[RMDB]
RNA sequence: GGGAACGACUCGAGUAGAGUCGAAAACGUGCGUACUGGGCCGCCGGCACAAUGUUCUACCCAGCCGUCUCAGAGGUCGCGGUUCGACCACGAUCAGCCAGCAGGUCAGCGGGGUCCUCCUAGCUAGACCUAGCAUCACGUUCGCGUGAUGCUAGGUAAAAGAAACAACAACAACAAC
Reactivity to 2A3 in 0.01 (KOAc 150mM, MgCl2 10mM, bicine 150mM(pH8.5), 24C), signal-to-noise 1, nucleotides 027 to 126: c020g030u030g030c060g080u090a140c050u060g000g040g000c000c030g020c020c010g020g000c020a030c010a050a120u160g040u130u020c050u110a080c000c000c010a000g010c010c010g070u040c030u030c100a030g020a080g130g000u020c010g020c010g000g000u050u090c150g050a120c030c000a000c020g010a030u020c000a000g060c010c000a000g050c010a040g040g000u030c000a010g020c010g000g020g010g000u090c010c030u070c010c010u030a050g020c020u010a040g070
Reactivity to DMS in 0.01 (KOAc 150mM, MgCl2 10mM, bicine 150mM(pH8.5), 24C), signal-to-noise 2, nucleotides 027 to 126: c060g000u010g010c090g040u000a080c000u010g000g000g010c070c060g020c060c060g030g020c030a040c080a080a070u010g020u000u000c090u000a140c040c010c000a080g000c020c030g000u000c030u000c080a050g010a180g020g010u000c020g030c040g000g020u000u000c110g010a090c020c020a070c040g000a050u020c050a120g010c030c050a050g010c060a060g000g010u010c040a050g020c030g000g000g000g000u000c030c040u000c010c010u000a090g010c080u000a140g010